[RMDB]
RNA sequence: GGGAACGACUCGAGUAGAGUCGAAAACGCAGAGGGUUCUGAUAACAAAGAACCUAGAUAGCCGCUUCGGUAUUAUAGGAUGUAGUCGGUGAGCCGGAAUGCCUGCAUCGUAAGCCUAUAAGUAAAUUUAAGUGUAAUCACUUCGGUGAUUACACAAGAACAUUUGCGUGUUCGCACGCAAAUGUUCAAAAGAAACAACAACAACAAC
Reactivity to 2A3 in 0.01 (KOAc 150mM, MgCl2 10mM, bicine 150mM(pH8.5), 24C), signal-to-noise 1, nucleotides 027 to 156: c040g050c030a030g080a050g080g000g040u000u020c040u000g050a130u080a300a080c080a050a170a000g010a050a040c110c000u000a000g010a090u110a000g030c040c070g040c060u100u140c090g100g000u050a050u230u000a000u060a020g020g020a010u050g040u040a020g070u050c000g010g000u020g150a000g000c040c000g000g130a050a040u080g030c010c020u040g090c030a000u000c000g000u000a030a010g020c010c000u050a080u040a090a040g070u160a010a060a250u180u120u090a160a030g000u000g000u000a000a000u000c000a000c060u000u020c090g070g000u000g000a000u000u000a000c000a000c000a010a020
Structure probing data (2A3) for a 207-nucleotide construct. Reactivities are given for positions 27 through 156. The RNA was probed in 150 mM KOAc, 10 mM MgCl2 and 150 mM bicine (pH 8.5) at 24 C.